[RMDB]
An RNA of 177 nucleotides, treated with DMS and read out base by base. For DMS the reverse transcriptase was MarathonRT. Values cover nucleotides 27 to 126. The reactions ran in a buffer of 150 mM KOAc, 10 mM MgCl2 and 150 mM bicine (pH 8.5), at 24 C.

RNA sequence: GGGAACGACUCGAGUAGAGUCGAAAAGUGAUGCCGCCAAGAACCAGGCUGCUAUGAACCCUCGUAACACCGUUUUUGACGCCAAGCGUCUUAUUGGUCGUCGUUACGAAGACCCUGAGACUCAAAAGGUCGGUAUGAGUUUCGACUCAUACCGACCAAAAGAAACAACAACAACAAC
Reactivity to DMS in 0.01 (KOAc 150mM, MgCl2 10mM, bicine 150mM(pH8.5), 24C), signal-to-noise 1, nucleotides 027 to 126: g000u010g020a040u010g000c050c050g030c050c020a070a070g000a140a120c070c190a080g030g010c080u000g000c010u020a110u010g000a120a090c110c110c070u000c040g000u010a010a020c000a080c100c030g010u020u000u000u010u000g000a050c010g080c050c110a070a160g010c050g010u030c020u000u020a060u010u000g010g030u020c110g000u040c110g120u000u010a030c020g020a020a080g000a240c020c010c080u000g000a090g000a010c050u020c120a090a110a140a050